[RMDB]
RNA sequence: GGGAACGACUCGAGUAGAGUCGAAAACAUGGUUUAGACUUAAUGCAAGCAGGGAGUGUCGUGCGUAGAGUUAACGUGCCCUACGUGUGUCUCCUAGCUAAUAAAGAGCAAGAAGCUAUUUUGAUGUACCGUAAGCUCUUCGGAGCUUACAAAAGAAACAACAACAACAAC
Reactivity to 2A3 in 0.01 (KOAc 150mM, MgCl2 10mM, bicine 150mM(pH8.5), 24C), signal-to-noise 9, nucleotides 027 to 129: c010a030u040g050g060u040u020u020a040g080a150c010u020u040a060a010u070g030c060a040a020g000c020a060g000g040g000a010g020u160g090u180c030g000u030g000c000g000u000a010g010a030g030u050u100a210a080c170g100u240g030c010c000c000u000a000c000g010u020g000u000g010u000c000u000c000c000u020a050g010c010u010a020a030u130a100a220a030g170a020g000c000a020a030g060a040a000g060c000u020a070u060u070u050u110g180a050u030g020u030a040c000c010
Reactivity to DMS in 0.01 (KOAc 150mM, MgCl2 10mM, bicine 150mM(pH8.5), 24C), signal-to-noise 5, nucleotides 027 to 129: c050a070u020g060g000u050u020u030a060g040a050c030u020u040a100a130u060g020c040a090a030g060c040a300g010g000g050a040g000u050g080u030c030g000u060g000c080g030u000a020g030a000g000u000u000a140a100c170g000u120g050c060c020c020u040a030c030g050u050g010u030g060u000c020u030c040c000u020a150g040c020u000a040a110u070a080a130a090g050a120g040c020a010a000g030a100a030g020c040u020a000u010u060u020u050g060a060u060g000u060a100c070c030
This 170-nucleotide RNA was probed chemically with 2A3 and DMS.
The data come from the RNA Mapping Database (RMDB), library 15KLIB.
For 2A3, 22,969 sequencing reads were counted.
DMS adducts were read by reverse transcription with MarathonRT.
Reactivities are given for positions 27 through 129.
The RNA was probed in 150 mM KOAc, 10 mM MgCl2 and 150 mM bicine (pH 8.5) at 24 C.
2A3 adducts were read by reverse transcription with SuperScript II with manganese.